Source information: This 177-nucleotide RNA was probed chemically with DMS and 2A3. For DMS the reverse transcriptase was MarathonRT. The DMS profile rests on 1,367 reads. Source: RMDB library M2PK90, as collected in RNAgym. The RNA was probed in 150 mM KOAc, 10 mM MgCl2 and 150 mM bicine (pH 8.5) at 24 C.
RNA sequence: GGGAACGACUCGAGUAGAGUCGAAAAAAAAUGAGUGCGUGGUAGCUCAAACCAGACCAAUCUUCGGCACAUGGUCGCACAAGUACAGCUUCGCCUGUACAAAGCGAACAACAACAACAACAAGCAAACGAGAGUAAAUGUUCGCAUUUACUCUCGUAAAAGAAACAACAACAACAAC
Reactivity to DMS in 0.01 (KOAc 150mM, MgCl2 10mM, bicine 150mM(pH8.5), 24C), signal-to-noise 2, nucleotides 027 to 126: a050a060a080a150u000g000a020g020u000g010c070g010u010g000g010u010a120g030c030u000c150a030a060a140c020c040a130g020a080c080c020a050a090u000c040u010u000c060g000g000c020a110c110a110u000g010g010u000c060g000c010a020c130a080a160g000u000a000c000a000g000c010u020u010c300g000c240c000u000g010u000a000c020a040a080a090g000c000g010a020a030c040a020a050c040a020a040c010a070a020c030a010a030c030a080a100g020c200a030a060
Reactivity to 2A3 in 0.01 (KOAc 150mM, MgCl2 10mM, bicine 150mM(pH8.5), 24C), signal-to-noise 2, nucleotides 027 to 126: a000a000a000a000u080g010a030g010u050g010c080g020u050g000g080u080a020g020c020u000c060a060a070a050c020c020a020g050a050c010c020a040a050u070c050u100u090c090g070g050c020a030c000a100u060g020g010u010c030g010c000a050c000a160a000g000u010a000c000a020g010c000u140u180c080g040c020c000u000g000u010a000c040a000a140a020g000c020g030a020a010c020a000a000c000a010a000c010a010a000c000a110a020c000a020a020g100c020a130a140